[RMDB]
RNA sequence: GGGAACGACUCGAGUAGAGUCGAAAACUGAGACGCUUCGGCGUCUCAGAAAUGGAACACAGGCCAAGGAAGCAAGAGCUAUCAUGCCAAUGACCACGUGGAAAACUCAUACGUUCGCGUAUGAGAAGUAUGGUAAUAACUUCGGUUAUUACCAUACAAAAGAAACAACAACAACAAC
Reactivity to 2A3 in 0.01 (KOAc 150mM, MgCl2 10mM, bicine 150mM(pH8.5), 24C), signal-to-noise 7, nucleotides 027 to 126: c010u010g000a000g010a000c010g010c020u040u080c220g160g010c000g000u000c000u000c000a000g000a000a000a000u090g020g020a060a000c030a000c030a090g020g000c020c020a050a050g060g020a060a010g010c060a070a090g030a030g120c020u040a100u250c010a030u110g000c010c010a030a030u060g030a050c010c010a040c090g020u130g060g050a040a060a040a060c000u010c000a000u000a020c000g020u010u050c260g000c010g070u000a000u010g000a000g000a000a010
Reactivity to DMS in 0.01 (KOAc 150mM, MgCl2 10mM, bicine 150mM(pH8.5), 24C), signal-to-noise 7, nucleotides 027 to 126: c000u000g010a010g010a010c000g020c000u000u010c200g040g010c000g010u000c000u010c000a000g000a030a050a070u010g000g010a090a080c070a050c070a090g010g010c010c030a060a070g000g000a080a080g010c050a060a060g000a090g010c090u000a060u000c050a060u000g000c030c040a080a100u000g000a090c020c020a070c140g010u000g000g000a070a040a090a150c010u000c000a000u000a010c000g010u000u010c200g020c010g010u000a000u000g000a010g010a030a040
Structure probing data (2A3 and DMS) for a 177-nucleotide construct.
Source: RMDB library M2PK50, as collected in RNAgym.
Reactivities are given for positions 27 through 126.
2A3 adducts were read by reverse transcription with SuperScript II with manganese.
The DMS profile rests on 10,766 reads.